[RMDB]
RNA sequence: GGGAACGACUCGAGUAGAGUCGAAAACAGCAAGCGGCAGCGACAAUCACCGUUUGCAAUGCGAGCAACGUGAGGCUUAAAUAAAUGUGUCUCGAUUGGAAGGACGGGCCGAGUUGACAACAACGGGCCCCACCGAUAUUUAUCCUGCUGCAACGGAGCAGUAGUGCUCAUUCGUGAGCACUACUGCAAAAGAAACAACAACAACAAC
Reactivity to 2A3 in 0.01 (KOAc 150mM, MgCl2 10mM, bicine 150mM(pH8.5), 24C), signal-to-noise 1, nucleotides 027 to 156: c100a040g050c120a210a020g000c020g080g000c020a020g040c050g180a030c200a010a030u140c120a040c040c030g030u000u080u080g020c000a020a020u220g030c090g020a110g000c000a080a040c090g110u150g010a030g010g110c040u140u300a160a040a090u250a050a070a070u190g080u020g000u000c000u020c030g110a030u030u040g040g020a010a010g140g000a080c140g000g000g050c000c000g040a140g050u000u070g000a040c030a300a010c010a020a020c020g000g010g050c000c000c000c000a050c000c020g000a000u020a080u050u060u020a080u100c000c000u030g000c000u000g000c020a000a140c090g050g050a120